[RMDB]
Source information:
Structure probing data (DMS and 2A3) for a 207-nucleotide construct. The 2A3 profile rests on 7,749 reads. 2A3 adducts were read by reverse transcription with SuperScript II with manganese. For DMS, 5,497 sequencing reads were counted.

RNA sequence: GGGAACGACUCGAGUAGAGUCGAAAAAAACCAAAACUGAAAACGGAAGGCAAUCCUUCCACGACGAUACUUACUUUCCUUUGAUCGUCGUUACUACUGGCAUAGCCACAAAGGAGAACAAACAUGAGCGCGGACACUGACUUCGGUCAGUGUCCAACGUAUAGUAAAUCUUCGGAUUUACUAUACGAAAAGAAACAACAACAACAAC
Reactivity to DMS in 0.01 (KOAc 150mM, MgCl2 10mM, bicine 150mM(pH8.5), 24C), signal-to-noise 3, nucleotides 027 to 156: a040a070a130c060c020a080a060a070a300c150u020g020a100a040a080a050c060g000g030a030a020g080g050c150a090a140u000c020c000u000u000c000c000a130c000g010a040c020g010a040u000a060c050u000u000a050c110u010u000u000c020c010u000u010u000g000a050u000c010g000u000c000g020u000u000a030c070u000a070c090u000g000g010c030a140u000a120g010c020c000a050c090a030a020a020g000g010a060g060a090a180c080a120a090a110c070a060u010g000a100g000c060g000c100g010g020a040c000a000c000u000g000a010c010u000u020c270g030g000u000c000a020g030u000g020u000c000c010a000a010
Reactivity to 2A3 in 0.01 (KOAc 150mM, MgCl2 10mM, bicine 150mM(pH8.5), 24C), signal-to-noise 8, nucleotides 027 to 156: a000a000a000c180c040a160a130a030a050c220u290g080a100a090a030a060c090g000g000a010a000g020g000c150a050a160u280c010c000u010u020c000c000a000c000g000a000c000g000a000u090a160c030u070u040a030c020u070u140u050c010c000u020u010u050g020a010u000c000g000u000c000g010u030u050a020c030u040a030c030u020g010g010c070a290u110a160g010c020c010a040c050a040a040a020g050g020a030g010a090a040c070a120a100a020c070a110u230g070a080g120c140g000c080g000g010a000c000a000c000u010g010a000c000u030u060c200g070g000u000c000a000g000u000g000u000c000c000a000a000